[RMDB]
RNA sequence: GGGAACGACUCGAGUAGAGUCGAAAACUAGCUCUGGGUCCAGCUUCCAGCUGGGAUCUCGCGUCCUUCUGAAGCUUCAGUCAAGAAGAGCUUGGGUCUUGGAGGAGACCAAGGCCAAGGGCAGCUGCAGUGGAAAAUAUCAUGGGGCUUGGGUUGAGGUCUCAAGGUAGUUCGCUACCUUGAGACCAAAAGAAACAACAACAACAAC
Reactivity to 2A3 in 0.01 (KOAc 150mM, MgCl2 10mM, bicine 150mM(pH8.5), 24C), signal-to-noise 1, nucleotides 027 to 156: c000u010a010g010c030u000c030u080g040g000g060u010c020c030a000g010c020u220u070c130c060a030g010c060u060g020g020g000a040u000c070u060c080g070c090g030u020c040c000u050u120c020u050g050a060a040g020c010u170u180c090a160g050u020c080a140a000g070a060a020g040a090g020c000u060u060g030g000g000u020c020u040u070g040g030a110g000g060a060g040a020c000c010a030a000g020g020c020c030a010a040g040g000g020c010a030g000c110u070g010c010a010g040u010g050g120a080a030a070a090u250a060u090c090a130u000g000g020g070g000c000u060u070g050g010g000u080u030g110a030